[RMDB]
RNA sequence: GGGAACGACUCGAGUAGAGUCGAAAAGUUUGCGGGUUCGCCCGCAAACAAAGAAAAGAUCGAAAGAUCAAGGCAGAAACGGAGCCAAAUCCGUAAUAUAAAAAAUCCUGUCCUUCGGGACAGGAAACUGUUAUAAAGGGUUCGCCCUUUAUAACAGAAAAGAAACAACAACAACAAC
Reactivity to DMS in 0.01 (KOAc 150mM, MgCl2 10mM, bicine 150mM(pH8.5), 24C), signal-to-noise 2, nucleotides 027 to 126: g000u000u000u000g040c010g010g000g020u000u030c180g040c020c000c000g000c000a000a000a010c010a060a070a150g000a130a130a130a100g030a010u000c000g000a140a120a130g000a010u000c010a120a130g000g000c080a110g010a080a110a010c000g000g000a030g000c000c100a060a060a070u000c000c000g010u010a040a070u010a160u020a010a020a110a110a090a080u000c000c000u000g040u000c000c010u010u020c260g030g010g010a000c010a000g000g000a000a010a020
Reactivity to 2A3 in 0.01 (KOAc 150mM, MgCl2 10mM, bicine 150mM(pH8.5), 24C), signal-to-noise 1, nucleotides 027 to 126: g020u000u010u010g000c010g040g010g000u060u060c160g080c010c000c000g000c010a000a000a000c010a010a020a010g010a000a100a020a030g010a000u020c030g000a050a070a040g000a010u020c030a010a040g000g000c030a020g180a100a240a010c000g000g020a020g010c030c110a090a070a000u040c000c000g040u030a180a040u240a020u090a040a070a030a010a010a040u010c000c000u010g000u030c010c000u040u080c270g110g020g020a000c000a000g000g010a000a000a000